[RMDB]
RNA sequence: GGGAACGACUCGAGUAGAGUCGAAAAUGUGGAGUCCAACUGUCUAGUACCAUUUGUUGAAAGGUUAUACCUUCUCCAUUGAAUUGUCUUUGUACCUUUGUCAGAAUCCAUUGACUACAUUUGUGUAAGCCCCAGACAUAUUCGUAUGUCUGGGGCUAAAAGAAACAACAACAACAAC
Reactivity to DMS in 0.01 (KOAc 150mM, MgCl2 10mM, bicine 150mM(pH8.5), 24C), signal-to-noise 1, nucleotides 027 to 126: u000g030u080g000g000a090g000u030c030c020a000a140c020u000g010u060c080u000a040g040u040a000c010c030a030u000u000u020g040u000u000g000a090a030a170g010g020u000u000a050u000a050c050c000u000u000c000u000c000c000a070u010u020g000a060a010u000u000g000u000c040u040u000u000g070u020a000c030c190u040u000u000g030u010c100a080g000a130a180u030c070c070a080u000u030g000a030c030u000a030c200a160u000u000u020g020u120g000u000a120
Reactivity to 2A3 in 0.01 (KOAc 150mM, MgCl2 10mM, bicine 150mM(pH8.5), 24C), signal-to-noise 1, nucleotides 027 to 126: u090g040u080g020g020a090g050u050c000c000a030a030c080u010g100u040c030u090a000g030u000a000c000c000a000u010u000u130g080u060u050g100a020a010a010g010g010u070u020a030u010a230c000c000u000u000c000u000c010c010a000u120u020g050a060a000u060u000g030u000c040u110u060u040g000u000a000c000c040u080u130u010g010u010c040a000g000a020a040u020c030c000a080u170u000g060a060c000u020a100c170a210u030u080u110g100u000g000u000a030

Description
Chemical mapping of a 177-nucleotide RNA with DMS and 2A3. The data come from the RNA Mapping Database (RMDB), library OK1LIB. For 2A3, 490 sequencing reads were counted. The RNA was probed in 150 mM KOAc, 10 mM MgCl2 and 150 mM bicine (pH 8.5) at 24 C. The DMS profile rests on 1,141 reads.